Source: RMDB library RFM130, as collected in RNAgym. The record gives the reactivity of an RNA of 207 nucleotides to 2A3.
RNA sequence: GGGAACGACUCGAGUAGAGUCGAAAACAAUUUUGUCAUCGGGUAAGUAUCCUAUCGGGCUUUUUAGGCUGAUGACAUAAACUAUGAGGAGUACUGUUAAUGGCCCGUAUCGCUGGCAUUAACAUCCCUGAGAAAGCAAGGAGUUCGCUCCUUGCAAGUUACAGUAGGCCUUCGGGCCUACUGUAACAAAAGAAACAACAACAACAAC
Reactivity to 2A3 in 0.01 (KOAc 150mM, MgCl2 10mM, bicine 150mM(pH8.5), 24C), signal-to-noise 1, nucleotides 027 to 156: c020a040a040u060u070u000u160g030u000c000a000u020c000g030g000g060u020a020a030g070u060a220u120c010c020u120a080u130c080g060g050g000c060u100u210u020u140u300a060g200g000c040u050g000a000u000g000a000c000a000u050a000a020a010c100u080a040u300g110a080g030g000a100g050u090a090c020u060g000u000u000a010a010u080g240g070c000c010c050g040u070a110u150c070g000c140u030g000g000c000a000u000u000a030a030c000a000u080c010c000c000u060g140a090g090a060a060a070g000c000a000a000g000g000a000g000u040u040c170g040c140u050c000c030u000u000g000c020a000a000
The 2A3 profile rests on 374 reads.